Structure probing data (2A3 and DMS) for a 207-nucleotide construct. The RNA was probed in 150 mM KOAc, 10 mM MgCl2 and 150 mM bicine (pH 8.5) at 24 C. It was measured as part of the RMDB library M2RFOK.

[RMDB]
RNA sequence: GGGAACGACUCGAGUAGAGUCGAAAAUCAGAAUCAGGCCGGAGUGUUUAGCGCUCCGUAAACACGGUCGUACAUCCAGCCGGUAGCCUGGUUCCUUGCAUUGAGUGAUGUACGGAGUAUAUAGAGCAAAAGAAAGACCUGUUCGCAGGUCUUUCAAGUUAGAGAUAAUGUUCGCAUUAUCUCUAACAAAAGAAACAACAACAACAAC
Reactivity to 2A3 in 0.01 (KOAc 150mM, MgCl2 10mM, bicine 150mM(pH8.5), 24C), signal-to-noise 6, nucleotides 027 to 156: u100c010a000g010a010a010u000c000a000g010g000c010c000g010g010a010g000u080g040u090u210u290a150g070c030g000c000u010c000c000g000u030a000a020a010c140a010c050g030g010u030c010g010u030a010c000a040u000c030c030a010g030c010c010g040g020u030a010g000c000c000u000g000g000u000u000c010c010u060u130g020c030a130u060u160g060a050g080u130g010a010u010g010u010a020c020g020g030a060g130u040a030u030a020u070a120g110a010g070c090a060a050a060a050g000a000a000a000g000a000c000c000u000g010u030u030c130g000c080a000g000g000u000c000u000u000u000c000a000a000
Reactivity to DMS in 0.01 (KOAc 150mM, MgCl2 10mM, bicine 150mM(pH8.5), 24C), signal-to-noise 3, nucleotides 027 to 156: u000c040a070g000a080a030u000c010a010g020g030c020c040g020g010a050g040u010g010u000u000u000a190g020c070g000c000u000c000c020g000u010a020a050a110c100a060c010g010g030u010c010g020u010a030c030a020u010c040c050a220g000c010c020g010g030u010a090g010c030c000u000g010g010u000u000c000c030u000u000g030c090a190u010u000g010a170g020u000g000a080u000g030u000a030c040g010g000a160g020u000a130u000a190u000a100g020a140g010c070a070a060a110a190g000a020a000a030g000a010c000c010u000g030u000u000c270g040c010a010g030g020u000c000u000u020u000c010a030a140